An RNA of 177 nucleotides, treated with 2A3 and read out base by base.
RNA sequence: GGGAACGACUCGAGUAGAGUCGAAAACAAGCCGUCGGAUACGCCGUGCAGGAUUCGGCGGACGGUGACGCGCUGCGUCAAAGAUCGGUGAUUGGCGGCUCGAAGCCUUUUACCCUGCAGCCAAUGUGCUACCGAACGUUUUCGAACGUUCGGUAGCAAAAGAAACAACAACAACAAC
Reactivity to 2A3 in 0.01 (KOAc 150mM, MgCl2 10mM, bicine 150mM(pH8.5), 24C), signal-to-noise 3, nucleotides 027 to 126: c060a000a000g070c020c020g010u020c020g090g060a110u110a180c000g000c030c010g030u070g080c090a160g000g130a110u040u090c000g000g000c000g000g000a000c010g040g000u040g040a000c000g050c010g000c030u080g010c020g140u150c030a100a120a000g110a060u110c050g000g000u030g000a040u010u020g030g000c000g030g170c010u080c130g110a020a060g020c000c000u050u050u000u000a020c000c000c000u020g020c000a000g040c000c000a000a060u190g040u030